The record gives the reactivity of an RNA of 177 nucleotides to DMS. The RNA was probed in 150 mM KOAc, 10 mM MgCl2 and 150 mM bicine (pH 8.5) at 24 C. The data come from the RNA Mapping Database (RMDB), library VIROID.
RNA sequence: GGGAACGACUCGAGUAGAGUCGAAAAAAGAGCGUAGCUAGCUGCGUUUCAACCUGCGUGGGUUGGGGCGGCUUAGCGGAUUAGGCGUUGUUAUGCCCUAGUGGUCCUUACUCCAUGCAAAGCCUGCGUCUGAAUGACAGUUCGCUGUCAUUCAGACAAAAGAAACAACAACAACAAC
Reactivity to DMS in 0.01 (KOAc 150mM, MgCl2 10mM, bicine 150mM(pH8.5), 24C), signal-to-noise 1, nucleotides 027 to 126: a110a080g010a050g030c030g000u000a190g020c020u010a090g020c000u000g040c010g020u000u000u000c010a030a040c010c010u000g010c260g070u040g000g000g030u010u000g000g010g030g000c010g010g000c000u000u000a000g020c030g020g000a110u010u000a040g000g000c040g000u010u010g050u010u000a100u000g010c000c010c030u010a070g030u000g010g000u000c010c040u000u000a060c070u000c030c020a050u010g020c030a070a030a110g020c030c020u010g010c180
Source information: The DMS profile rests on 1,392 reads.